Chemical mapping of a 207-nucleotide RNA with 2A3 and DMS. The DMS profile rests on 5,380 reads.

RNA sequence: GGGAACGACUCGAGUAGAGUCGAAAAUAUGGAUGGAGACUGCAUAACUUCAGUUAAUUUGACUCGUUGUUUUGAUCAAACACUGUCUGUUCAUAAAUUCAUUCGUGUUGAUGAAGAUCCAGAUCCAGCUGCAGCUAAUCAUGUUUGCAUUUGUGGCAAACCGCUCAAAUUUCGAUUUGAGCGGUUUAAAAGAAACAACAACAACAAC
Reactivity to 2A3 in 0.01 (KOAc 150mM, MgCl2 10mM, bicine 150mM(pH8.5), 24C), signal-to-noise 2, nucleotides 027 to 156: u150a050u050g030g000a010u020g020g020a040g020a030c020u030g000c090a030u050a220a070c040u040u070c070a050g020u030u090a090a240u120u060u140g030a020c030u030c140g000u000u040g040u020u050u060u100g100a120u040c040a000a050a010c030a030c050u060g010u030c030u020g040u060u030c040a030u120a240a120a080u110u070c020a020u010u010c050g030u040g040u110u080g010a050u040g030a010a040g040a050u020c010c050a010g000a060u020c010c030a030g030c040u010g000c010a030g000c000u070a080a030u070c080a100u200g060u100u090u040g000c020a030u080u060u060g030u010g030g000c000
Reactivity to DMS in 0.01 (KOAc 150mM, MgCl2 10mM, bicine 150mM(pH8.5), 24C), signal-to-noise 3, nucleotides 027 to 156: u010a030u000g010g000a050u000g010g010a070g010a110c020u030g020c060a210u010a050a090c050u010u000c020a080g010u000u000a080a140u000u000u000g010a030c020u010c050g030u010u000g020u000u000u010u000g010a130u000c040a070a040a040c040a070c040u010g000u000c030u010g010u000u010c050a080u000a070a050a150u000u000c010a060u000u000c100g050u000g020u010u000g020a060u020g010a080a050g000a120u000c060c020a120g010a080u000c070c040a080g030c070u000g020c010a080g010c050u010a070a160u010c100a060u010g010u000u010u000g020c030a180u000u000u010g030u030g020g020c060
Notes: Source: RMDB library OK3TST, as collected in RNAgym. Conditions: 150 mM KOAc, 10 mM MgCl2 and 150 mM bicine (pH 8.5), 24 C. For 2A3 the reverse transcriptase was SuperScript II with manganese. DMS adducts were read by reverse transcription with MarathonRT.